[RMDB]
Chemical mapping of a 177-nucleotide RNA with 2A3 and DMS.

RNA sequence: GGGAACGACUCGAGUAGAGUCGAAAACAUGAGUACGAUGGUACACUGAGCACUAGGAUCAGCGUGCACAUGACAUGUGGUACCUAGCUCACUAGCUAGCAUGGUACCGUACUGAUCGGUACUCUACCCCAGUUCCGCUAUUCGUAGCGGAACUGGGAAAAGAAACAACAACAACAAC
Reactivity to 2A3 in 0.01 (KOAc 150mM, MgCl2 10mM, bicine 150mM(pH8.5), 24C), signal-to-noise 2, nucleotides 027 to 126: c060a040u130g020a000g000u020a000c010g010a020u030g020g020u000a000c010a020c030u020g000a000g020c040a090c270u200a080g190g090a080u030c000a000g060c060g050u030g000c030a030c020a260u110g120a030c000a050u050g030u060g000g000u000a010c030c000u000a020g010c000u020c010a130c080u060a020g160c050u030a000g000c040a030u080g010g000u020a030c000c000g000u030a030c040u090g130a140u010c030g110g010u010a010c000u040c020u020a070c000
Reactivity to DMS in 0.01 (KOAc 150mM, MgCl2 10mM, bicine 150mM(pH8.5), 24C), signal-to-noise 1, nucleotides 027 to 126: c210a060u000g000a040g040u010a040c010g170a070u000g010g010u000a010c000a130c040u000g040a120g020c040a160c200u050a170g030g000a070u000c000a010g010c000g040u020g010c010a180c130a050u000g050a060c060a000u000g010u000g020g010u000a000c000c000u010a260g010c000u000c090a120c110u000a160g010c250u000a040g010c040a180u010g000g040u000a000c000c000g010u010a010c020u010g000a090u000c040g040g000u000a000c000u020c010u030a160c060
Notes
It was measured as part of the RMDB library OK2TRN. The RNA was probed in 150 mM KOAc, 10 mM MgCl2 and 150 mM bicine (pH 8.5) at 24 C. The DMS profile rests on 648 reads.